Structure probing data (2A3 and DMS) for a 177-nucleotide construct. For 2A3, 823 sequencing reads were counted.
RNA sequence: GGGAACGACUCGAGUAGAGUCGAAAAGAUGAGUGGGUGACCUAUCAGCUUGACGGUACGGUAAGUGCGUACCGAGGCUAUAACGGGUAACGGGGAAUAUGGGUUUUAUUCCGGAGAGGGAGCCUGAUGUGAUUUGUCUGUUCGCAGACAAAUCACAAAAAGAAACAACAACAACAAC
Reactivity to 2A3 in 0.01 (KOAc 150mM, MgCl2 10mM, bicine 150mM(pH8.5), 24C), signal-to-noise 2, nucleotides 027 to 126: g110a100u210g050a020g050u040g000g030g000u030g060a050c000c010u000a000u140c080a000g020c000u110u000g080a110c030g000g020u020a010c020g030g040u200a300a090g050u030g280c000g000u000a000c000c000g030a030g000g000c000u010a040u100a100a040c120g030g000g080u020a000a070c030g000g010g050g000a000a140u070a180u090g010g020g010u050u000u000u030a130u090u030c080c000g020g000a090g000a000g020g020g000a010g000c000c000u070g000a060
Reactivity to DMS in 0.01 (KOAc 150mM, MgCl2 10mM, bicine 150mM(pH8.5), 24C), signal-to-noise 1, nucleotides 027 to 126: g000a130u020g010a080g010u000g020g010g000u000g000a180c050c020u030a100u020c040a040g000c000u000u000g050a060c020g020g000u000a010c030g000g000u000a120a130g000u040g000c020g040u020a030c000c000g000a000g000g030c010u020a150u020a080a070c150g000g000g060u010a040a080c140g000g000g000g020a090a070u030a070u000g000g040g000u010u000u000u010a010u040u010c080c000g000g000a110g000a080g000g000g000a110g040c000c070u000g000a230

Reactivities are given for positions 27 through 126.